[RMDB]
RNA sequence: GGGAACGACUCGAGUAGAGUCGAAAACCAACAAUGUGAUCUUGCUUGCGGAGGCAAAAUUUGCACAGUAUAAAAUCUGCAAGUAGUGCUAUUGUUGGAAUCACCGUACCUAUUUAGGUUUACGCUCUGGAGUAGCAAAGUUCGCUUUGCUACUCCAAAAAGAAACAACAACAACAAC
Reactivity to 2A3 in 0.01 (KOAc 150mM, MgCl2 10mM, bicine 150mM(pH8.5), 24C), signal-to-noise 4, nucleotides 027 to 126: c020c000a010a000c000a000a020u100g020u060g190a180u080c070u060u040g010c000u010u000g000c010g000g020a000g060g000c010a000a100a110a270u120u060u050g060c090a070c020a150g090u020a070u110a210a100a020a130u000c000u010g010c000a010a000g000u010a000g060u020g030c000u060a000u020u000g000u000u000g020g060a000a010u110c060a060c040c030g010u050a010c000c030u060a150u300u180u200a030g000g000u010u120u030a050c060g000c010u020c060
Reactivity to DMS in 0.01 (KOAc 150mM, MgCl2 10mM, bicine 150mM(pH8.5), 24C), signal-to-noise 3, nucleotides 027 to 126: c000c010a000a010c000a010a010u000g010u000g000a100u040c040u020u000g020c000u000u000g000c020g000g000a020g040g000c050a000a070a110a100u030u010u000g020c030a110c250a130g030u000a120u020a090a050a110a140u010c000u000g010c000a000a000g000u000a010g000u010g000c060u000a010u000u010g010u000u000g000g000a070a040u010c100a150c080c000g000u010a010c000c000u000a210u020u010u020a020g000g010u010u030u020a010c120g000c220u020c140
The record gives the reactivity of an RNA of 177 nucleotides to 2A3 and DMS. Conditions: 150 mM KOAc, 10 mM MgCl2 and 150 mM bicine (pH 8.5), 24 C.